Chemical mapping of a 177-nucleotide RNA with 2A3.
The 2A3 profile rests on 467 reads.
Conditions: 150 mM KOAc, 10 mM MgCl2 and 150 mM bicine (pH 8.5), 24 C.
For 2A3 the reverse transcriptase was SuperScript II with manganese.
[RMDB]
RNA sequence: GGGAACGACUCGAGUAGAGUCGAAAAACGCGAGCUGUUGGCCUCCUGGUAUCAGCCAAUUCCUGAGCCGGAAAGUCCGAUUGCCACUAAACCGCUGACGCCGCCGACCACUGCGUCCAAACCGCCACCAGCCUACGGCAUUCGUGCCGUAGGCUGGAAAAGAAACAACAACAACAAC
Reactivity to 2A3 in 0.01 (KOAc 150mM, MgCl2 10mM, bicine 150mM(pH8.5), 24C), signal-to-noise 1, nucleotides 027 to 126: a010c060g020c010g010a010g060c120u000g000u080u050g000g000c000c000u020c000c060u050g070g000u300a220u100c060a000g030c000c000a020a080u090u080c000c030u010g030a040g040c020c000g000g060a090a090a000g060u000c010c030g110a130u000u060g030c020c000a080c060u060a040a040a040c010c010g060c060u020g000a060c040g060c000c010g000c000c030g010a080c000c000a030c040u080g050c000g050u080c000c000a000a130a080c010c010g080c060c000a070